[RMDB]
RNA sequence: GGGAACGACUCGAGUAGAGUCGAAAAUACUCAUGGGAAGUCGGCACAACUCCCGACUAACGGGGAGGUCCGCAGUGUAGCUUUUUGGUCGGAGCUGUUGUGCGGACGUCGAGUAACAGCUAGCCAACAUAGUCGCCUAUUUCGAUAGGCGACUAUGAAAAGAAACAACAACAACAAC
Reactivity to 2A3 in 0.01 (KOAc 150mM, MgCl2 10mM, bicine 150mM(pH8.5), 24C), signal-to-noise 2, nucleotides 027 to 126: u030a010c000u000c010a070u050g000g020g090a070a030g060u030c060g050g040c030a020c010a070a050c040u000c040c000c000g000a010c000u020a060a030c000g040g010g000g010a110g060g090u070c010c010g000c040a010g060u030g020u080a080g050c030u080u030u030u060u090g070g000u050c000g010g060a080g000c110u010g000u030u000g040u030g000c020g120g000a000c000g000u000c040g050a000g020u010a030a000c030a020g010c040u030a000g030c000c030a000a000
Reactivity to DMS in 0.01 (KOAc 150mM, MgCl2 10mM, bicine 150mM(pH8.5), 24C), signal-to-noise 2, nucleotides 027 to 126: u020a010c020u010c000a150u040g030g000g000a040a110g020u000c000g020g010c000a030c030a020a020c020u000c040c000c000g000a050c030u000a040a030c210g010g000g010g000a120g010g010u000c020c030g040c080a100g040u020g000u040a060g000c030u000u000u000u000u000g000g010u000c020g000g020a010g000c170u000g000u000u000g020u010g010c000g060g010a000c000g020u020c020g000a020g010u000a010a100c140a070g000c100u000a080g030c000c030a100a230